The record gives the reactivity of an RNA of 177 nucleotides to DMS and 2A3.
The data come from the RNA Mapping Database (RMDB), library M2PK50.
The 2A3 profile rests on 2,855 reads.
Reactivities are given for positions 27 through 126.
The reactions ran in a buffer of 150 mM KOAc, 10 mM MgCl2 and 150 mM bicine (pH 8.5), at 24 C.
2A3 adducts were read by reverse transcription with SuperScript II with manganese.
For DMS, 6,832 sequencing reads were counted.
RNA sequence: GGGAACGACUCGAGUAGAGUCGAAAAGAGAGCUGCUUCGGCAGCUCUCCGUCAGGUAGUUCCUAUCUCAAUUACCUGUAGUGGCCUACGUCCGGAUAGGAAGAGAGCCCUGCUUCGGCAGGGCUAAAACUUAAAUGGUCUUCGGACCAUUUAAGUUAAAAGAAACAACAACAACAAC
Reactivity to DMS in 0.01 (KOAc 150mM, MgCl2 10mM, bicine 150mM(pH8.5), 24C), signal-to-noise 5, nucleotides 027 to 126: g000a020g000a010g020c000u000g010c010u000u010c210g020g030c000a010g010c000u000c000u000c000c010g010u000c020a010g000g000u000a020g010u000u000c030c010u000a030u000c020u020c100a060a050u000u000a010c010c000u000g010u010a070g010u010g010g010c010c010u010a070c200g000u010c160c130g000g010a030u000a010g000g010a190a140g000a160g000a040g010c000c000c000u000g000c010u000u010c190g030g010c000a010g000g000g010c000u000a000a010
Reactivity to 2A3 in 0.01 (KOAc 150mM, MgCl2 10mM, bicine 150mM(pH8.5), 24C), signal-to-noise 2, nucleotides 027 to 126: g000a010g020a000g010c010u020g010c040u060u080c300g100g040c050a010g000c000u010c000u000c000c000g000u010c000a010g010g030u020a010g030u040u020c020c010u020a020u010c070u030c060a090a130u040u030a030c000c000u020g030u090a130g170u040g070g050c020c010u020a060c070g100u010c090c070g000g010a020u000a020g040g040a050a000g120a020g010a000g010c000c010c000u000g000c000u030u000c070g080g000c010a000g040g000g000c000u000a000a020